[RMDB]
RNA sequence: GGGAACGACUCGAGUAGAGUCGAAAAGGCACAGAGGGACACACCGGGCCGGGGCGCCGAGGAUAGCUACCGCCCGCAGGGAUAGUAAAUAUCCGUGACCAGUGGCCUCGGUGGCUGCGUCUCCCGGGGUACAGAGUUAGUUCGCUAACUCUGUACCAAAAGAAACAACAACAACAAC
Reactivity to DMS in 0.01 (KOAc 150mM, MgCl2 10mM, bicine 150mM(pH8.5), 24C), signal-to-noise 1, nucleotides 027 to 126: g000g000c000a060c030a030g010a150g040g000g000a140c100a080c040a090c090c020g010g010g020c120c030g050g020g040g010c070g010c040c100g060a070g000g010a070u000a050g010c090u000a040c050c040g020c000c010c110g050c170a050g000g000g000a030u020a010g000u030a110a100a200u000a000u000c000c000g010u000g000a140c120c060a100g010u000g010g010c000c010u000c020g000g050u000g040g030c030u010g000c040g010u010c050u020c000c020c010g000g000